[RMDB]
RNA sequence: GGGAACGACUCGAGUAGAGUCGAAAAACACCGAUCUUCGGAUCGGUGUAAAUAAAUUCAGCGGUUUAAAUUUCGAGCGCAUAACCGCUGAUGCGCUCGUAAAAACAGUUAGGUUCGCCUAACUGAAACUAACUAGUGCGUUCGCGCACUAGUUAGUAAAAGAAACAACAACAACAAC
Reactivity to 2A3 in 0.01 (KOAc 150mM, MgCl2 10mM, bicine 150mM(pH8.5), 24C), signal-to-noise 1, nucleotides 027 to 126: a040c000a000c000c010g010a000u000c000u020u080c210g080g010a000u000c000g020g000u000g010u000a020a000a000u010a000a000a040u100u030c000a020g020c010g050g070u060u280u300a030a180a160u160u290u210c080g000a020g000c020g000c000a010u040a110a040c010c010g000c000u000g000a020u000g010c010g000c000u000c030g060u050a020a080a050a040a050c000a000g000u010u000a000g010g050u040u050c250g040c040c000u010a010a040c010u020g000a090a010
Reactivity to DMS in 0.01 (KOAc 150mM, MgCl2 10mM, bicine 150mM(pH8.5), 24C), signal-to-noise 1, nucleotides 027 to 126: a220c000a000c010c000g000a000u000c000u000u020c190g030g020a010u000c000g030g000u000g000u000a000a070a060u000a050a050a140u000u000c000a020g040c010g010g000u000u000u000a040a050a120u000u000u000c060g020a020g020c030g000c010a010u010a060a170c040c010g020c030u000g010a020u000g010c010g000c000u000c010g000u000a040a040a080a080a100c000a000g010u000u000a010g000g000u000u010c210g020c000c000u000a040a000c000u000g000a040a080